[RMDB]
RNA sequence: GGGAACGACUCGAGUAGAGUCGAAAAGAUAUGGACGACGACAUGUACCCUCUCGGAAACGAGAGAUGUACAACAGCGUCAGUCCUAAGUCAAAAUCUCCCCCCGAUCUUCGGAUCGGGGGGAGAAACAAACAUCUGUACUUCGGUACAGAUGUUUGAAAAGAAACAACAACAACAAC
Reactivity to DMS in 0.01 (KOAc 150mM, MgCl2 10mM, bicine 150mM(pH8.5), 24C), signal-to-noise 2, nucleotides 027 to 126: g010a060u000a280u000g010g020a020c000g010a020c000g020a030c080a210u000g000u000a010c010c150c000u000c010u000c010g000g000a040a070a100c000g000a010g000a000g000a000u010g010u000a000c000a040a070c260a120g000c010g010u000c000a090g010u000c000c000u010a020a070g000u000c030a060a060a150a210u000c000u010c000c000c000c000c000c010g000a010u000c010u010u000c190g010g000a000u000c010g020g040g010g030g000g000a000g000a000a020a130
Reactivity to 2A3 in 0.01 (KOAc 150mM, MgCl2 10mM, bicine 150mM(pH8.5), 24C), signal-to-noise 1, nucleotides 027 to 126: g020a030u050a030u080g010g000a000c010g010a000c000g050a080c060a080u060g030u010a020c000c000c010u000c000u020c010g000g040a080a040a040c020g000a000g000a020g000a010u070g020u000a000c000a140a060c060a100g070c000g010u010c060a030g000u000c000c000u010a090a010g060u030c020a000a020a130a300u010c000u000c030c030c000c000c000c000g010a010u000c020u120u090c300g050g000a030u000c040g000g000g000g000g040g000a000g000a010a010a010
An RNA of 177 nucleotides, treated with DMS and 2A3 and read out base by base. It was measured as part of the RMDB library TTRDEL. The reactions ran in a buffer of 150 mM KOAc, 10 mM MgCl2 and 150 mM bicine (pH 8.5), at 24 C. The 2A3 profile rests on 2,196 reads.